[RMDB]
RNA sequence: GGGAACGACUCGAGUAGAGUCGAAAAAGACGGGAACCCAUCGACUGUCACCAGAUGCUGCAUCACCUGAUCACUGAUGGCUCAACGGUAUCCGGCGGUACAACUGAAUACUUGUAGCUGCCUUUUGAAAAGGAGUUCAUCUUCGGAUGAACUCCAACUAUCCGCAUUUCUUCGGAAAUGCGGAUAGAAAAGAAACAACAACAACAAC
Reactivity to DMS in 0.01 (KOAc 150mM, MgCl2 10mM, bicine 150mM(pH8.5), 24C), signal-to-noise 1, nucleotides 027 to 156: a060g000a110c000g010g010g000a150a160c070c000c020a100u010c000g010a090c030u020g000u000c020a080c050c030a090g010a060u000g030c020u010g000c130a100u010c160a070c030c000u020g030a120u000c100a090c070u000g020a060u010g020g030c070u000c010a120a080c000g010g020u000a010u010c000c030g030g010c000g000g000u000a090c070a080a160c030u020g000a060a110u000a040c060u000u000g030u000a040g020c040u010g020c040c090u000u000u000u000g000a030a110a140a200g020g000a020g030u000u000c020a000u000c010u000u000c300g060g050a010u000g010a040a010c000u000c010c000a000a030
Reactivity to 2A3 in 0.01 (KOAc 150mM, MgCl2 10mM, bicine 150mM(pH8.5), 24C), signal-to-noise 4, nucleotides 027 to 156: a020g040a010c020g020g010g010a030a080c000c000c010a060u080c020g110a080c030u060g020u060c030a030c040c030a040g060a130u080g020c050u040g030c030a050u020c010a050c040c010u060g020a060u060c020a010c060u030g010a050u030g070g000c030u020c050a040a100c050g020g030u060a070u050c060c040g020g000c010g010g000u020a020c010a040a010c060u160g110a140a070u090a170c040u050u040g020u040a040g060c010u010g000c010c000u100u120u070u140g090a080a080a040a040g000g000a000g000u010u000c000a000u000c000u040u080c140g060g000a010u000g000a010a000c000u000c000c000a000a010
An RNA of 207 nucleotides, treated with DMS and 2A3 and read out base by base.
Conditions: 150 mM KOAc, 10 mM MgCl2 and 150 mM bicine (pH 8.5), 24 C.
Reactivities are given for positions 27 through 156.
The data come from the RNA Mapping Database (RMDB), library M2RFPK.